[RMDB]
RNA sequence: GGGAACGACUCGAGUAGAGUCGAAAAUUGCUACCCGCACUUUCACUGCUACCACUGCUGUAGGUAGUUGUAUAAAGAGUGUAGUGCGGCAUCUAGGUGUUACUAAAGGCAUAUUGACAGGCUGUUUAAACUGCGCGCUUCGGCGCGCAGAAAAGAAACAACAACAACAAC
Reactivity to 2A3 in 0.01 (KOAc 150mM, MgCl2 10mM, bicine 150mM(pH8.5), 24C), signal-to-noise 1, nucleotides 027 to 129: u040u230g020c000u070a000c110c000c000g000c000a030c000u010u050u180c090a000c000u030g020c040u000a000c000c000a020c010u110g040c010u050g130u060a000g000g010u000a000g060u000u180g090u100a160u050a000a150a040g040a000g010u020g000u020a000g000u000g000c000g000g000c000a000u000c030u040a020g160g000u000g000u110u060a110c010u040a000a080a080g050g030c000a000u000a110u090u030g000a010c000a010g000g010c000u000g000u000u000u040a040a100a000
Reactivity to DMS in 0.01 (KOAc 150mM, MgCl2 10mM, bicine 150mM(pH8.5), 24C), signal-to-noise 3, nucleotides 027 to 129: u000u070g020c000u070a060c150c040c000g040c000a000c000u010u090u070c060a040c040u030g040c280u070a000c000c030a030c000u000g070c170u050g030u030a150g020g020u000a000g000u010u010g000u010a040u040a300a300a110g000a000g000u040g000u010a000g020u000g030c020g040g040c160a080u000c130u000a070g050g000u080g000u000u000a080c130u020a000a030a000g000g060c030a060u160a120u060u000g000a300c160a090g040g070c020u040g060u010u010u010a000a000a210